Structure probing data (DMS and 2A3) for a 177-nucleotide construct. DMS adducts were read by reverse transcription with MarathonRT. The data come from the RNA Mapping Database (RMDB), library VIROID. Reactivities are given for positions 27 through 126.
[RMDB]
RNA sequence: GGGAACGACUCGAGUAGAGUCGAAAAGCGAACUGGCAACAAGGACGGUGGGGAGUGCCCAGCGGCUCGACAGGAGUAAUCCCCGCCGAAACAGGGUUUUCACCCUUCCUUUCUUCGGGUGUCCUUCACUGUUCAUAAACUUCGGUUUAUGAACAGUAAAAGAAACAACAACAACAAC
Reactivity to DMS in 0.01 (KOAc 150mM, MgCl2 10mM, bicine 150mM(pH8.5), 24C), signal-to-noise 3, nucleotides 027 to 126: g010c050g000a080a050c040u020g010g020c080a090a060c200a080a030g010g010a090c040g010g030u000g000g000g000g000a040g010u000g000c020c000c030a080g020c030g000g010c050u010c050g010a110c080a110g000g000a060g020u000a040a100u000c010c000c000c010g000c000c010g000a010a030a050c200a030g000g000g000u000u010u020u000c150a060c000c000c010u000u000c010c020u000u000u000c050u000u000c040g010g000g010u000g010u010c010c010u000u000c110
Reactivity to 2A3 in 0.01 (KOAc 150mM, MgCl2 10mM, bicine 150mM(pH8.5), 24C), signal-to-noise 2, nucleotides 027 to 126: g100c030g040a080a020c050u080g050g000c020a070a050c020a140a000g020g030a000c000g000g000u010g000g000g000g000a020g040u070g020c020c000c000a040g080c070g140g020c060u060c090g120a090c060a100g060g110a150g080u030a010a040u000c000c000c000c000g000c000c000g000a010a000a020c050a000g020g020g040u050u070u180u300c090a070c030c030c000u000u030c020c030u070u080u080c050u070u060c010g030g030g000u060g040u050c010c000u070u090c050